[RMDB]
RNA sequence: GGGAACGACUCGAGUAGAGUCGAAAAGAUAUGGAUCCUAUGGGAGCUCUAGCGUCGGAAACGACGCGAUAUGAGCGUUGAUCAUAGGAGUCCUAAGUCAAAACUAGUUAUCUUCGGAUAACUAGAACAAUAGUUUACCGUUCGCGGUAAACUAUUGAAAAGAAACAACAACAACAAC
Reactivity to 2A3 in 0.01 (KOAc 150mM, MgCl2 10mM, bicine 150mM(pH8.5), 24C), signal-to-noise 2, nucleotides 027 to 126: g020a000u010a020u040g000g000a000u010c000c010u000a000u010g000g000g030a030g000c000u010c060u120a060g010c020g000u000c010g020g000a020a000a000c000g000a000c000g010c010g020a020u020a080u200g000a000g010c000g010u120u020g000a000u000c010a010u000a000g020g010a010g060u010c000c000u010a010a000g010u000c000a020a000a010a130c010u010a000g000u000u000a000u000c020u060u080c300g140g000a000u010a010a010c000u000a000g020a020a000
Reactivity to DMS in 0.01 (KOAc 150mM, MgCl2 10mM, bicine 150mM(pH8.5), 24C), signal-to-noise 3, nucleotides 027 to 126: g000a010u000a000u020g000g000a210u000c000c000u000a000u000g000g000g000a000g010c000u010c000u000a180g000c000g020u000c000g010g000a000a000a020c000g010a000c000g010c000g000a030u000a060u010g010a010g020c000g010u010u010g000a020u010c010a000u000a010g000g000a020g010u010c000c000u010a000a110g000u000c000a100a070a080a230c000u000a010g000u000u000a000u000c000u000u010c210g020g010a010u000a000a010c000u000a000g010a100a140